[RMDB]
RNA sequence: GGGAACGACUCGAGUAGAGUCGAAAAGCUCACCAAGUGCACAAUACCCCGAGUGACCACCCGAGGAGAAGGGGUUCUUUGCGACCUGGGCUCUGUGGUCUUACAUCGUGCCUCCACUGAUCCUUGAUGAAAAUGAGUAUUUCGAUACUCAUUUUCAAAAAGAAACAACAACAACAAC
Reactivity to DMS in 0.01 (KOAc 150mM, MgCl2 10mM, bicine 150mM(pH8.5), 24C), signal-to-noise 9, nucleotides 027 to 126: g010c070u000c030a120c080c090a060a120g020u000g010c040a050c070a070a090u010a170c040c010c010c030g000a120g010u010g000a060c040c030a090c020c240c090g010a100g010g000a070g010a110a100g010g000g010g000u000u000c040u000u010u010g010c070g000a050c030c020u010g010g000g010c020u000c030u000g010u010g000g000u000c030u000u000a080c090a070u000c060g020u010g000c020c000u000c030c020a070c080u010g010a100u010c050c010u000u000g000a250
Reactivity to 2A3 in 0.01 (KOAc 150mM, MgCl2 10mM, bicine 150mM(pH8.5), 24C), signal-to-noise 5, nucleotides 027 to 126: g010c010u010c030a050c030c050a130a090g060u070g060c010a040c020a090a140u110a200c020c000c000c010g030a050g060u050g030a030c010c010a030c050c070c070g070a090g040g050a080g020a080a050g040g010g030g010u030u000c020u030u070u140g020c040g020a030c000c000u040g050g050g000c010u020c020u040g050u040g020g010u010c040u040u090a060c050a090u070c040g040u050g020c000c010u070c010c010a080c030u050g020a040u040c010c020u050u050g040a060